RNA sequence: GGGAACGACUCGAGUAGAGUCGAAAAACGGAUGGUACGCCAUCCGACCACUGGGUAGAAGCGUUCAAUCAGCACCGUGACGGUGCAGAUGGGAAAUUGCCCAUGAUACGCACCAUACGUGGUGCGAAAAAGCCAUCGGUGUUCGCACCGAUGGCAAGACCUUCUAAACCUUCGGGUUUAGAAGGUCAAAAGAAACAACAACAACAAC
Reactivity to 2A3 in 0.01 (KOAc 150mM, MgCl2 10mM, bicine 150mM(pH8.5), 24C), signal-to-noise 2, nucleotides 027 to 156: a010c000g000g010a000u000g000g030u050a020c160g010c030c000a010u010c000c000g010a010c000c010a050c010u030g010g020g000u030a030g040a140a010g040c010g090u090u080c040a040a060u000c000a020g020c000a000c010c010g130u180g210a180c260g000g000u010g030c010a010g040a000u010g020g040g000a010a200a140u020u030g000c000c000c000a000u060g010a030u010a020c020g000c010a010c000c010a010u030a050c180g080u040g010g030u010g000c010g040a060a030a030a000a010g000c010c000a000u000c010g000g000u010g020u060u070c140g020c080a000c000c000g000a000u000g000g000c000a000a000